An RNA of 177 nucleotides, treated with 2A3 and DMS and read out base by base.
RNA sequence: GGGAACGACUCGAGUAGAGUCGAAAAAAUCUGGCCACGAUAUCGAGCGCAAGAUCAAUGGCGUUCAGUUCAAUAUGGGCAAGUGCAUGCAUCAGCGCGAUGCGGCCAUGUUCUGUGUUGAGCGAAACAUUAUCCGUCGUUUCGACGACGGAUAAUGAAAAGAAACAACAACAACAAC
Reactivity to 2A3 in 0.01 (KOAc 150mM, MgCl2 10mM, bicine 150mM(pH8.5), 24C), signal-to-noise 3, nucleotides 027 to 126: a000a000u060c040u050g110g000c020c020a040c110g040a040u040a030u210c100g010a010g020c020g000c040a090a060g000a170u110c060a050a100u120g100g000c000g000u030u040c030a000g010u010u000c010a020a010u010a010u040g010g000g000c030a050a000g090u090g240c040a090u120g000c000a010u030c000a040g300c080g040c110g220a000u000g000c000g000g010c000c020a030u110g010u160u170c030u000g000u000g000u010u000g000a010g000c020g040a040a070a010
Reactivity to DMS in 0.01 (KOAc 150mM, MgCl2 10mM, bicine 150mM(pH8.5), 24C), signal-to-noise 4, nucleotides 027 to 126: a050a060u000c050u000g020g000c010c010a110c110g000a110u010a050u010c130g020a080g020c080g010c040a090a060g010a070u010c210a110a080u010g010g000c030g010u010u000c050a120g010u000u010c000a040a020u000a010u000g000g010g000c010a050a050g040u010g000c010a040u010g020c010a010u000c000a180g010c220g010c180g010a010u000g010c000g010g000c000c010a170u000g010u000u030c010u010g010u010g010u000u000g000a030g000c020g010a110a070a180
In probing experiments dimethyl sulfate is read out at A N1 and C N3, which are open when not base-paired.